[RMDB]
RNA sequence: GGGAACGACUCGAGUAGAGUCGAAAACGCUGGGUGGAUGGACAUGCUAGUACUGAAGCGCGCACGGUACAUAGCAACAGCCCGCUCCACCUGUGCUGAAGCGCGCACGGCAACCGAAAGGUGCGAAAACGAUAGUGGCUUUCGAGCCACUAUCGAAUCGCAAUAUUUUCUUCGGAAAAUAUUGCGAAAAAGAAACAACAACAACAAC
Reactivity to DMS in 0.01 (KOAc 150mM, MgCl2 10mM, bicine 150mM(pH8.5), 24C), signal-to-noise 1, nucleotides 027 to 156: c090g040c050u020g000g010g030u000g000g000a100u010g030g050a010c030a220u000g040c000u030a140g000u000a030c030u000g000a030a130g000c020g030c030g020c030a300c020g070g030u010a000c000a220u000a080g020c040a120a090c240a090g010c020c010c000g080c170u010c030c000a040c030c000u040g000u000g000c040u000g000a090a070g000c000g010c010g000c000a180c060g000g030c010a110a220c080c020g000a130a150a170g010g000u010g000c000g000a020a130a080a220c040g000a030u030a030g010u010g010g010c010u000u010u010c230g020a040g010c000c000a020c000u000a000u000c030g000a050a090
Reactivity to 2A3 in 0.01 (KOAc 150mM, MgCl2 10mM, bicine 150mM(pH8.5), 24C), signal-to-noise 3, nucleotides 027 to 156: c070g020c020u020g020g000g020u020g000g020a090u120g040g050a070c070a130u240g020c000u000a010g000u000a000c000u040g060a250a070g010c000g000c010g020c040a020c040g000g010u010a040c080a260u060a140g020c020a020a090c030a090g070c030c020c010g010c040u020c000c000a000c020c020u040g080u080g020c040u150g070a110a010g000c000g010c000g000c000a000c000g050g020c030a100a130c000c010g070a090a030a030g010g000u010g030c020g020a140a080a010a000c010g000a000u000a000g010u000g000g000c000u050u070u130c230g020a000g000c000c020a000c000u000a000u000c000g010a010a020

This 207-nucleotide RNA was probed chemically with DMS and 2A3. It was measured as part of the RMDB library RNAMAK. For 2A3, 3,395 sequencing reads were counted. The DMS profile rests on 1,590 reads.